The record gives the reactivity of an RNA of 177 nucleotides to DMS and 2A3.
It was measured as part of the RMDB library OK2TRN.
The 2A3 profile rests on 612 reads.
DMS adducts were read by reverse transcription with MarathonRT.

RNA sequence: GGGAACGACUCGAGUAGAGUCGAAAAGACUAUGGCUCUCAUGAAGUAUGGCAGGCCUUAAGCCUGGGAAGAGAGCUCUGAUGUUAAUGAGGAUUUUUCUUCCAUGGGGUCCUAUGCACAGUAGGGCACUUCACCGGUUUUUCGAAACCGGUGAAGUAAAAGAAACAACAACAACAAC
Reactivity to DMS in 0.01 (KOAc 150mM, MgCl2 10mM, bicine 150mM(pH8.5), 24C), signal-to-noise 2, nucleotides 027 to 126: g010a120c030u000a160u000g000g000c000u010c030u010c020a130u010g000a150a110g010u000a050u000g000g020c030a040g000g040c000c040u020u000a040a300g000c010c000u000g010g000g000a080a110g030a020g000a000g020c030u010c040u010g000a160u000g000u000u010a080a180u010g000a230g010g010a070u000u000u000u000u000c020u000u010c020c020a130u000g020g010g020g020u000c010c010u000a010u000g000c180a060c250a140g010u010a030g000g000g030c000
Reactivity to 2A3 in 0.01 (KOAc 150mM, MgCl2 10mM, bicine 150mM(pH8.5), 24C), signal-to-noise 1, nucleotides 027 to 126: g000a000c080u020a090u140g030g040c000u000c010u000c040a120u110g150a200a030g130u300a060u220g150g020c000a000g010g020c030c000u050u090a140a000g020c040c050u060g000g070g050a110a030g000a000g000a010g000c030u010c020u020g100a060u190g020u110u250a260a110u120g110a050g000g000a110u240u000u000u090u000c000u070u060c070c100a080u130g020g050g000g080u000c000c010u000a000u130g060c100a090c040a100g010u000a000g030g000g000c020